[RMDB]
This 177-nucleotide RNA was probed chemically with DMS and 2A3.
RNA sequence: GGGAACGACUCGAGUAGAGUCGAAAAAAGUCGAAUUGACAAUGAAGAAAGAAGUAGGAAGCCGAAAAGCCAUCAUUGCCUAUAAUCAAAACCCAUAAACCCGUACCAUGAUUCUUUCUUCACUGCCGUGAUCUCAUUACUUCGGUAAUGAGAUCACAAAAGAAACAACAACAACAAC
Reactivity to DMS in 0.01 (KOAc 150mM, MgCl2 10mM, bicine 150mM(pH8.5), 24C), signal-to-noise 1, nucleotides 027 to 126: a010a020g000u000c060g000a060a120u060u020g010a120c010a150a090u040g000a000a050g000a030a020a070g000a000a030g010u020a080g030g000a230a020g010c040c010g000a020a090a130a070g000c010c040a110u010c000a030u000u000g000c060c040u000a030u000a000a050u020c110a010a020a050a040c040c020c030a080u000a140a030a090c030c000c020g000u010a040c000c000a110u030g020a140u000u020c000u000u000u030c020u000u000c000a010c080u000g040c070c110
Reactivity to 2A3 in 0.01 (KOAc 150mM, MgCl2 10mM, bicine 150mM(pH8.5), 24C), signal-to-noise 3, nucleotides 027 to 126: a000a000g100u090c070g030a150a170u160u230g000a010c030a030a090u050g000a000a020g030a020a030a000g020a030a000g010u080a030g030g090a090a010g020c010c020g020a030a130a000a000g010c000c000a020u050c020a000u020u160g020c000c010u090a050u070a110a020u070c040a040a010a050a070c020c020c010a030u110a030a050a010c020c000c010g010u040a050c030c020a040u110g030a050u130u000c000u010u000u000c000u000u000c000a010c040u050g060c020c020
Annotation: For DMS the reverse transcriptase was MarathonRT.